[RMDB]
RNA sequence: GGGAACGACUCGAGUAGAGUCGAAAAACGAGGUUCGGCAGGAAUGCCAAAUCAACAAUGCGCAUGUUGUCGCCGGAUGUGGAUCCGGGUAUCAAAGCGUUUAUAGCCGUUGUCAGAGCUGCAGAACAUAUCUAAAGCCUUUCGAGGCUUUAGAUAUAAAAGAAACAACAACAACAAC
Reactivity to DMS in 0.01 (KOAc 150mM, MgCl2 10mM, bicine 150mM(pH8.5), 24C), signal-to-noise 5, nucleotides 027 to 126: a090c100g010a170g010g020u000u010c040g000g030c030a030g000g060a170a110u010g000c030c020a030a020a020u020c050a100a120c160a090a060u010g010c030g010c020a110u020g000u000u000g000u020c150g020c010c000g000g000a020u010g020u060g020g010a050u000c020c010g000g000g000u000a030u010c070a030a070a060g000c030g010u000u030u030a080u040a090g020c050c040g000u000u000g000u000c030a080g010a180g000c030u010g000c040a040g000a080a070c170
Reactivity to 2A3 in 0.01 (KOAc 150mM, MgCl2 10mM, bicine 150mM(pH8.5), 24C), signal-to-noise 3, nucleotides 027 to 126: a000c040g030a090g000g030u030u060c020g010g000c000a030g060g150a250a110u030g010c020c010a020a020a000u150c010a020a090c010a000a150u140g010c020g000c020a050u110g060u050u030g070u070c060g050c140c000g010g000a040u080g090u200g270g060a010u020c010c000g030g020g020u000a030u030c070a050a100a010g040c030g030u020u120u040a140u100a010g060c020c050g000u000u090g030u020c030a020g000a020g100c010u050g000c010a000g010a070a030c050